This 207-nucleotide RNA was probed chemically with DMS and 2A3. For DMS, 4,925 sequencing reads were counted. The reactions ran in a buffer of 150 mM KOAc, 10 mM MgCl2 and 150 mM bicine (pH 8.5), at 24 C. 2A3 adducts were read by reverse transcription with SuperScript II with manganese. It was measured as part of the RMDB library M2RFPK. For 2A3, 2,309 sequencing reads were counted. For DMS the reverse transcriptase was MarathonRT.

[RMDB]
RNA sequence: GGGAACGACUCGAGUAGAGUCGAAAAAGUGCACUAGGUACGCCUAGUGCACAUUCCAGGACAUACUGCUGAGGAUGUCAAAAAUGCAGUUGGAGUCCUAAACUGGAUAGGCUACGGCCUAUCCAGAAAAAGACUUGGUUGUUCGCAACCAAGUCAACUUACAUAUGUAGUUCGCUACAUAUGUAAGAAAAGAAACAACAACAACAAC
Reactivity to DMS in 0.01 (KOAc 150mM, MgCl2 10mM, bicine 150mM(pH8.5), 24C), signal-to-noise 2, nucleotides 027 to 156: a110g030u010g020c000a010c000u000a010g000g030u000a110c300g070c010c000u010a010g000u010g020c000a000c000a020u000u010c020c020a170g030g020a050c010a070u000a050c000u000g010c030u000g020a220g030g010a100u000g000u000c000a030a060a070a110a140u000g020c020a030g020u010u000g000g000a220g000u000c010c030u000a000a090a160c000u010g000g000a040u000a010g010g050c000u000a130c300g050g030c000c000u000a010u000c000c000a000g000a000a030a080a120a140g020a020c020u000u000g020g010u010u000g020u000u000c290g030c000a020a020c000c010a010a020g020u000c010a010a030
Reactivity to 2A3 in 0.01 (KOAc 150mM, MgCl2 10mM, bicine 150mM(pH8.5), 24C), signal-to-noise 2, nucleotides 027 to 156: a000g000u000g000c000a010c030u000a000g000g000u050a040c160g080c010c010u000a020g000u000g000c010a000c000a000u000u030c000c000a010g000g000a010c020a030u120a000c030u010g010c030u060g030a060g140g130a280u280g270u300c120a040a100a010a010a010u160g000c000a000g020u030u020g030g060a080g030u020c000c000u030a010a130a000c000u010g000g000a000u000a000g020g010c040u010a020c220g050g010c000c000u000a000u020c000c000a000g000a000a000a000a000a000g010a000c000u000u000g000g010u000u010g010u040u040c170g010c070a000a000c000c010a010a000g000u000c000a000a010